[RMDB]
RNA sequence: GGGAACGACUCGAGUAGAGUCGAAAAGAAGAUAAUUACGCUUUAGCUGCUGCCUAAUAUAGGCAGCCCGUCAGUCCAGGGUUCCUGCGCCUUGGGUAGCUGGCGUCAUUAAGUCAGGCCUUUUGAGUGGGAAGGUUAAACUCUAGAACUGUCACAGCACGGUUACUCUGUUCGCAGAGUAACCGUGAAAAGAAACAACAACAACAAC
Reactivity to 2A3 in 0.01 (KOAc 150mM, MgCl2 10mM, bicine 150mM(pH8.5), 24C), signal-to-noise 1, nucleotides 027 to 156: g070a050a010g160a120u190a130a070u280u130a090c120g030c100u130u080u290a060g030c130u070g000c000u000g020c040c000u200a300a240u300a190u040a120g000g000c000a000g010c000c000c000g000u000c010a000g040u110c000c000a000g000g000g000u000u010c000c000u010g000c040g000c000c010u000u000g000g000g000u000a010g000c000u000g000g050c030g000u010c020a020u140u120a030a000g050u030c000a000g010g110c000c000u080u000u040u030g010a000g000u010g000g010g030a100a080g090g000u120u160a020a010a020c000u000c000u000a010g000a000a100c100u040g100u170c120a030c010a050g010
This 207-nucleotide RNA was probed chemically with 2A3. For 2A3, 379 sequencing reads were counted. Conditions: 150 mM KOAc, 10 mM MgCl2 and 150 mM bicine (pH 8.5), 24 C.